[RMDB]
RNA sequence: GGGAACGACUCGAGUAGAGUCGAAAAUGGGUACACGGUUUCUCCCUGCCACAAAGACCGUCCCUAAGGAGCUCCUUCCUGUCGUCGAUACGCCAGGUAUCGAGCUGAUUGCUGAGGAGGCCGCGCAAAAUUGAGGACUCUUCGGAGUCCUCAAUUUAAAAGAAACAACAACAACAAC
Reactivity to DMS in 0.01 (KOAc 150mM, MgCl2 10mM, bicine 150mM(pH8.5), 24C), signal-to-noise 2, nucleotides 027 to 126: u010g030g000g000u010a090c130a040c040g020g010u000u010u010c140u010c000c000c000u010g040c020c020a080c040a030a060a300g000a050c000c000g000u010c010c010c010u000a050a150g000g000a160g010c000u000c000c010u010u000c260c000u000g010u000c000g010u000c210g000a030u000a030c040g010c150c210a040g000g040u000a020u000c030g010a050g000c030u000g020a040u000u010g020c050u000g020a100g000g000a070g010g020c030c020g000c250g020c170a050
This 177-nucleotide RNA was probed chemically with DMS. The RNA was probed in 150 mM KOAc, 10 mM MgCl2 and 150 mM bicine (pH 8.5) at 24 C. Reactivities are given for positions 27 through 126. The DMS profile rests on 963 reads.